[RMDB]
RNA sequence: GGGAACGACUCGAGUAGAGUCGAAAAAUACACCAGCAGUAGGACUCAUCGACCGUCACAACAAGGUUGUGCUGGUAUCCGACGGUCGUAUAGCCCUGUCUUGCAGGUUGCCUUGCACUGACGUGCCACACCAUUUACAGAUUCGUCUGUAAAUGAAGUAAUUCUACUCGUUCGCGAGUAGAAUUACAAAAGAAACAACAACAACAAC
Reactivity to 2A3 in 0.01 (KOAc 150mM, MgCl2 10mM, bicine 150mM(pH8.5), 24C), signal-to-noise 4, nucleotides 027 to 156: a000u110a010c080a010c000c000a000g000c010a000g010u040a010g000g010a030c010u020c040a040u030c020g000a000c010c000g020u020c020a070c020a090a110c100a220a190g120g040u090u060g050u150g100c090u090g010g100u030a100u090c040c060g000a000c000g000g000u000c000g000u060a050u120a030g000c020c010c000u040g070u090c070u060u110g000c010a020g010g010u040u090g050c020c010u030u090g000c000a040c050u180g100a060c090g010u020g010c020c020a070c000a020c020c000a020u000u000u000a010c000a000g000a020u010u110c140g120u000c100u000g000u000a000a000a000u010g010a050a000
Reactivity to DMS in 0.01 (KOAc 150mM, MgCl2 10mM, bicine 150mM(pH8.5), 24C), signal-to-noise 2, nucleotides 027 to 156: a180u010a060c020a210c000c010a140g020c000a060g010u000a040g010g010a040c020u000c050a280u000c010g010a000c000c000g000u000c030a200c070a100a080c040a080a110g000g020u000u010g000u000g000c000u010g000g000u000a030u000c040c050g050a050c030g030g010u000c030g000u000a070u000a040g000c000c000c000u000g000u000c030u000u010g010c030a110g010g020u010u000g010c020c120u000u000g030c010a060c020u000g000a130c180g020u010g050c000c050a110c070a120c070c010a020u000u000u010a010c000a010g000a050u000u000c300g030u000c000u000g010u000a010a000a010u000g000a010a120

This 207-nucleotide RNA was probed chemically with 2A3 and DMS.